Structure probing data (DMS and 2A3) for a 170-nucleotide construct. It was measured as part of the RMDB library 15KLIB. DMS adducts were read by reverse transcription with MarathonRT. For 2A3, 93,491 sequencing reads were counted.
RNA sequence: GGGAACGACUCGAGUAGAGUCGAAAAUCCUCGAGUUUCUUGAUGGUCUUCCUGGUCUUCCGGAGAUCUUUCUCGAGCUCCUCCGCCUUUUUCCUUGCUGUGAUCCAUUUCUCGAGGGUCUCCUCCCGCAUCUACGUGUUCGCACGUAGAAAAAGAAACAACAACAACAAC
Reactivity to DMS in 0.01 (KOAc 150mM, MgCl2 10mM, bicine 150mM(pH8.5), 24C), signal-to-noise 9, nucleotides 027 to 129: u010c000c000u000c100g020a100g020u010u040u000c000u040u040g000a110u050g000g000u020c020u030u030c030c020u030g040g030u020c060u030u040c050c040g020g000a060g020a050u020c030u020u020u020c010u010c000g020a050g030c050u010c020c010u030c030c030g020c020c020u020u020u010u020u020c010c030u010u010g040c050u030g010u030g030a050u020c050c030a100u000u000u000c030u000c010g040a100g010g010g010u030c010u000c030c030u020c010c000c020g000c130a090
Reactivity to 2A3 in 0.01 (KOAc 150mM, MgCl2 10mM, bicine 150mM(pH8.5), 24C), signal-to-noise 9, nucleotides 027 to 129: u020c010c000u010c020g050a050g010u050u090u020c040u070u090g060a090u100g020g010u010c020u090u060c040c030u050g050g020u070c040u180u040c060c030g020g010a040g010a070u020c000u020u090u010c030u010c020g020a010g000c010u030c010c000u020c010c010g010c000c000u060u080u020u050u040c020c000u040u110g020c060u070g050u090g080a060u060c030c020a090u070u100u050c030u010c010g020a040g000g000g000u000c020u020c010c000u020c000c000c000g040c010a080

Description
The DMS profile rests on 95,258 reads. For 2A3 the reverse transcriptase was SuperScript II with manganese.